[RMDB]
RNA sequence: GGGAACGACUCGAGUAGAGUCGAAAACAGGUGUGGUGUGGGUUAGCAAGGCGAAUGCUGACCUUAACCCGACUAACCUUGGAACCAGAUCUAAGGCUAGAAGUGUCAUCACUCCAAAAUUUGACUCGGAGCUGCCUUCUGACAUUGAAAUCGUUGACACUUAAGGGCAAUUCGUUGCCCUUAAGUGAAAAGAAACAACAACAACAAC
Reactivity to DMS in 0.01 (KOAc 150mM, MgCl2 10mM, bicine 150mM(pH8.5), 24C), signal-to-noise 2, nucleotides 027 to 156: c070a250g000g050u000g020u000g000g080u000g040u000g010g030g040u000u000a000g070c000a060a140g020g030c080g000a080a110u010g010c020u010g000a130c040c020u020u000a030a020c020c000c000g010a140c000u000a020a020c020c010u000u000g000g020a060a120c060c300a200g010a260u000c020u000a040a040g020g010c000u000a040g000a050a080g020u000g000u000c010a070u000c040a070c030u010c010c020a010a060a100a300u000u000u000g010a060c030u000c070g010g010a050g040c020u020g000c040c040u010u000c010u010g010a040c080a080u010u000g010a040a110a040u000c050g020u010u000g000a250
Reactivity to 2A3 in 0.01 (KOAc 150mM, MgCl2 10mM, bicine 150mM(pH8.5), 24C), signal-to-noise 3, nucleotides 027 to 156: c080a040g000g030u030g010u050g040g020u040g030u100g050g020g000u000u010a000g020c020a050a060g260g050c100g110a120a040u140g010c010u030g000a000c000c000u020u060a010a020c010c010c000g020a000c020u030a020a050c000c000u010u010g020g000a050a050c090c020a080g010a070u010c030u040a040a000g020g010c020u020a010g010a080a010g060u010g090u150c020a050u060c010a020c010u020c000c030a020a080a090a130u110u110u120g050a050c010u010c080g030g000a030g000c050u040g040c010c040u040u080c060u060g050a060c040a090u120u180g100a090a110a040u130c100g030u000u010g020a020
The data come from the RNA Mapping Database (RMDB), library OK3TST. Structure probing data (DMS and 2A3) for a 207-nucleotide construct. DMS adducts were read by reverse transcription with MarathonRT. Conditions: 150 mM KOAc, 10 mM MgCl2 and 150 mM bicine (pH 8.5), 24 C. The 2A3 profile rests on 2,160 reads.